[RMDB]
RNA sequence: GGGAACGACUCGAGUAGAGUCGAAAAGUGUCGGACUCGCAAGUGCGAAUAUAUUUUAUCCCUAAACAGGGAGUGGAAAGCACGUCCAGGAGUGGAAAACACGUCCAUCCCAAAGCGAGAAAUGAAAGCUACUCCUGUAUUUCGAUACAGGAGUAGCAAAAGAAACAACAACAACAAC
Reactivity to 2A3 in 0.01 (KOAc 150mM, MgCl2 10mM, bicine 150mM(pH8.5), 24C), signal-to-noise 1, nucleotides 027 to 126: g080u110g020u060c040g050g010a060c000u000c030g000c050a000a070g000u000g020c030g100a230a000u140a000u000a110u070u120u070u070a080u030c000c010c000u070a210a290a020c020a080g040g000g000a010g050u050g000g140a030a080a030g000c000a000c020g020u000c000c000a020g060g000a020g060u020g000g020a080a030a020a000c050a000c050g100u070c040c030a030u080c050c000c020a000a000a010g010c030g020a040g000a060a090a010u150g050a020a010a030
Reactivity to DMS in 0.01 (KOAc 150mM, MgCl2 10mM, bicine 150mM(pH8.5), 24C), signal-to-noise 2, nucleotides 027 to 126: g000u000g020u000c090g010g010a140c000u000c050g010c050a110a100g020u010g080c000g020a080a080u010a040u010a070u010u000u000u020a130u010c000c000c000u000a040a080a180c300a040g050g000g000a050g000u000g000g020a070a120a220g000c000a000c020g010u000c010c090a070g010g010a060g000u000g000g010a030a050a160a060c160a090c060g000u000c010c050a100u000c000c020c030a010a080a040g030c030g000a010g020a100a150a100u000g010a050a050a170
Record summary: Chemical mapping of a 177-nucleotide RNA with 2A3 and DMS. The reactions ran in a buffer of 150 mM KOAc, 10 mM MgCl2 and 150 mM bicine (pH 8.5), at 24 C. It was measured as part of the RMDB library M2PK90. For 2A3 the reverse transcriptase was SuperScript II with manganese.